[RMDB]
This 207-nucleotide RNA was probed chemically with 2A3 and DMS. Reactivities are given for positions 27 through 156. It was measured as part of the RMDB library M2RFPK. For 2A3 the reverse transcriptase was SuperScript II with manganese. Conditions: 150 mM KOAc, 10 mM MgCl2 and 150 mM bicine (pH 8.5), 24 C.
RNA sequence: GGGAACGACUCGAGUAGAGUCGAAAAGGAUGUCCCGACCGGAGGCCGACAAUCCAGGGAACCGGAUGUCAUCACGUUGGUGCAGUACCAGAUGGCAUCUUAAAUCCGAUCUGCAAAUAAGCAUGUAAAAACCGGCAUACGUUCGCGUAUGCCGGAAGCGAUAGUAUACGUUCGCGUAUACUAUCGCAAAAGAAACAACAACAACAAC
Reactivity to 2A3 in 0.01 (KOAc 150mM, MgCl2 10mM, bicine 150mM(pH8.5), 24C), signal-to-noise 3, nucleotides 027 to 156: g060g010a050u050g020u040c000c030c000g000a040c030c040g020g000a010g020g050c040c050g030a080c070a050a060u000c040c050a050g010g020g000a050a020c050c020g000g010a000u000g050u000c020a000u000c010a020c300g080u130u100g040g000u050g000c050a020g040u170a030c020c000a020g000a000u010g000g000c040a010u000c000u010u060a060a060a010u000c010c000g040a070u060c040u070g010c030a060a070a090u130a110a140g050c050a060u130g040u300a010a050a000a050a140c000c020g000g000c010a000u010a010c000g050u030u060c200g000c010g110u000a000u000g000c000c010g000g010a010a000
Reactivity to DMS in 0.01 (KOAc 150mM, MgCl2 10mM, bicine 150mM(pH8.5), 24C), signal-to-noise 1, nucleotides 027 to 156: g010g010a050u020g050u000c000c050c000g010a080c050c010g000g000a080g050g000c070c020g000a090c070a140a160u010c020c030a120g010g000g000a080a210c080c070g010g000a030u010g000u020c000a050u000c010a140c220g000u020u000g010g030u000g000c060a100g000u010a170c050c000a200g010a040u000g030g000c000a010u000c060u010u010a040a140a090u000c000c020g010a060u000c020u000g000c040a070a100a090u010a080a100g000c050a090u000g010u000a010a100a040a150a060c010c000g000g000c020a000u010a050c030g000u010u010c300g000c000g060u000a000u010g030c020c000g020g000a010a020